Chemical mapping of a 177-nucleotide RNA with 2A3 and DMS. Source: RMDB libraries RFM100 and RFMREP, as collected in RNAgym. The 2A3 profile rests on 1,634 reads. Conditions: 150 mM KOAc, 10 mM MgCl2 and 150 mM bicine (pH 8.5), 24 C.

RNA sequence: GGGAACGACUCGAGUAGAGUCGAAAAUUCUCAGGAUGAUGGAGUGAGUGAUGGAAUAGGUUGCCAACUGUAGUUACUCCACUCAGCACAGAAUGGCUGCGGGGAAAUAUAAUCAGACAUGCCCAAAAUAAUCACUUAGCUUCGGCUAAGUGAUUAUAAAAGAAACAACAACAACAAC
Reactivity to 2A3 in 0.01 (KOAc 150mM, MgCl2 10mM, bicine 150mM(pH8.5), 24C), signal-to-noise 3, nucleotides 027 to 126: u020u000c000u010c010a000g100g060a110u080g020a010u040g000g040a050g000u050g010a030g030u110g030a040u010g060g040a050a170u140a150g000g120u140u120g040c010c000a000a000c010u090g010u080a050g040u050u000a000c000u040c000c020a010c000u010c010a000g000c060a020c000a010g220a130a130u210g090g030c010u030g000c020g020g010g020g050a000a080a000u220a040u070a040a110u080c020a030g040a090c000a010u170g020c000c000c020a080a000a000
Reactivity to DMS in 0.01 (KOAc 150mM, MgCl2 10mM, bicine 150mM(pH8.5), 24C), signal-to-noise 5, nucleotides 027 to 126: u000u000c010u000c010a130g010g010a050u010g010a070u010g010g000a030g000u010g010a070g000u010g010a090u000g000g000a060a090u020a060g020g020u000u000g020c080c080a040a130c070u000g010u000a100g000u010u000a050c060u000c020c030a050c060u010c030a050g000c060a070c100a090g010a130a080u020g000g000c020u000g010c080g000g000g000g000a070a080a100u020a060u030a090a060u040c100a070g000a060c100a040u030g000c010c010c010a050a050a100